[RMDB]
RNA sequence: GGGAACGACUCGAGUAGAGUCGAAAAGAUAUGGAACGCGGGAGCAACAGCCUCACAUCGGAAACGAUGUAAGAGGACAUGCUCAGCGUUCCUAAGUCAAAGAUACCUACCUUCGGGUAGGUAUCAACUAUUGAAAUCCCUUCGGGGAUUUCAAUAGAAAAGAAACAACAACAACAAC
Reactivity to DMS in 0.01 (KOAc 150mM, MgCl2 10mM, bicine 150mM(pH8.5), 24C), signal-to-noise 1, nucleotides 027 to 126: g000a030u000a120u000g010g000a000a000c030g000c000g000g070g020a020g020c030a090a100c130a250g030c000c000u000c000a130c000a000u000c000g000g000a030a040a050c000g000a000u000g010u000a040a120g040a000g000g010a000c060a090u010g010c000u000c010a180g000c000g000u000u000c000c000u000a000a060g000u000c000a140a200a160g010a010u000a020c000c000u000a000c000c000u000u010c270g040g000g010u000a000g000g000u010a000u000c000a090a170
Reactivity to 2A3 in 0.01 (KOAc 150mM, MgCl2 10mM, bicine 150mM(pH8.5), 24C), signal-to-noise 1, nucleotides 027 to 126: g000a010u050a040u040g010g020a000a010c030g170c100g300g300g000a000g000c140a080a230c120a300g040c000c020u000c020a000c010a020u000c000g000g000a030a000a010c010g000a000u000g000u030a060a110g010a010g050g080a030c020a150u280g000c010u000c000a020g000c000g000u010u000c000c000u000a000a000g010u000c030a000a000a270g000a000u010a000c000c000u000a000c000c000u030u130c300g110g000g000u000a000g000g000u020a000u010c000a000a010